[RMDB]
RNA sequence: GGGAACGACUCGAGUAGAGUCGAAAAGAAGCAGUCGUGUGACUCGUGGUACGCGCCCGCGUUGUAGCACGCGACGCCGUGGACCGUCGCCCGGCGGAGCGUCGCGUGGUCCCAGCGACCGGCCUCGGUACUCAUGAUCGUUCGCGAUCAUGAGUACAAAAGAAACAACAACAACAAC
Reactivity to DMS in 0.01 (KOAc 150mM, MgCl2 10mM, bicine 150mM(pH8.5), 24C), signal-to-noise 3, nucleotides 027 to 126: g010a100a080g030c060a110g000u000c020g010u000g000u010g000a030c060u000c050g010u020g000g020u000a060c050g020c120g010c150c030c020g020c040g020u010u000g010u020a140g010c050a020c020g000c010g010a040c000g020c010c150g030u010g020g010a200c060c030g000u000c070g020c090c060c060g010g000c000g000g000a170g000c020g010u000c010g000c010g020u000g000g010u000c040c050c010a170g010c010g010a050c050c060g000g000c010c020u000c040g030
Reactivity to 2A3 in 0.01 (KOAc 150mM, MgCl2 10mM, bicine 150mM(pH8.5), 24C), signal-to-noise 2, nucleotides 027 to 126: g070a050a020g000c060a020g020u060c020g040u070g040u100g070a050c010u040c060g080u100g030g090u110a050c060g050c010g010c080c020c000g030c020g050u100u130g140u170a110g070c030a000c010g000c000g000a000c000g000c020c000g050u150g100g050a140c030c000g000u050c030g040c020c030c020g000g000c020g000g020a050g000c000g010u000c000g000c000g000u010g000g020u050c030c000c010a030g010c020g040a030c020c000g080g000c000c030u080c040g020